[RMDB]
RNA sequence: GGGAACGACUCGAGUAGAGUCGAAAAUAGGGCUCGUUUGAAGGCAGCGUUUUUUAAGGUCGAUCAUGGAUGGGAAGAUCAGACAUUAGAUCAAGUGGAAACGCUUGUUCGUAAGGAAAAUCACGUACAUACGUCACUAGUUCGCUAGUGACGUAUGAAAAGAAACAACAACAACAAC
Reactivity to DMS in 0.01 (KOAc 150mM, MgCl2 10mM, bicine 150mM(pH8.5), 24C), signal-to-noise 7, nucleotides 027 to 126: u000a090g020g000g010c040u000c060g000u000u010u020g010a120a110g010g010c050a050g010c040g000u000u010u000u010u010u010a080a110g010g010u000c040g020a060u000c080a080u000g010g020a120u000g000g000g010a110a090g010a050u000c030a070g010a090c080a060u010u000a120g000a010u000c010a020a050g020u000g000g000a080a060a100c010g010c010u000u000g000u000u000c020g010u010a100a090g010g010a060a050a070a090u000c070a060c150g010u010a150
Reactivity to 2A3 in 0.01 (KOAc 150mM, MgCl2 10mM, bicine 150mM(pH8.5), 24C), signal-to-noise 4, nucleotides 027 to 126: u150a030g030g020g000c040u020c060g080u030u030u130g070a080a040g050g000c030a010g020c010g020u030u000u000u010u050u130a130a030g040g000u020c010g000a040u040c030a030u100g100g000a080u050g020g010g030a100a000g010a060u040c010a000g030a040c040a040u040u120a010g010a010u010c000a020a020g030u010g020g000a030a030a000c000g000c000u010u030g010u020u020c030g040u060a030a070g090g030a040a050a020a040u090c050a040c120g020u070a040